[RMDB]
RNA sequence: GGGAACGACUCGAGUAGAGUCGAAAAGUUAGGAGCCAGAUUUAAUCAGCCUGCGAAUUCUAUCUUUGAUGCAAAAGUGUAUUGCUUAGCAGGAGAUGGGUGCUUCAUGGAAGGCGUGAGUCAUGAAAAUUACUCAGUACUUCGGUACUGAGUAAUUAAAAGAAACAACAACAACAAC
Reactivity to 2A3 in 0.01 (KOAc 150mM, MgCl2 10mM, bicine 150mM(pH8.5), 24C), signal-to-noise 9, nucleotides 027 to 126: g140u130u120a070g040g040a020g050c030c020a020g020a090u060u080u120a100a090u080c040a030g060c010c000u030g010c030g050a060a090u150u050c020u030a120u010c040u080u120u110g170a190u090g010c020a010a080a070a040g090u110g060u200a180u120u250g010c020u060u090a030g000c030a020g030g010a010g010a010u040g010g030g010u100g040c030u030u030c010a040u080g050g040a070a020g020g000c050g030u070g020a010g050u040c020a070u100g070a080a080
Reactivity to DMS in 0.01 (KOAc 150mM, MgCl2 10mM, bicine 150mM(pH8.5), 24C), signal-to-noise 9, nucleotides 027 to 126: g010u010u020a080g020g010a100g020c040c030a070g000a080u020u010u010a090a080u000c070a110g010c030c000u010g000c080g000a060a060u020u020c040u000a020u010c040u000u000u000g010a110u010g010c060a030a060a070a040g020u010g010u030a070u040u030g000c010u000u000a300g010c000a030g000g000a040g000a020u000g010g000g020u020g010c110u000u000c030a080u020g000g010a080a030g000g010c030g010u000g000a070g000u010c040a080u020g000a070a050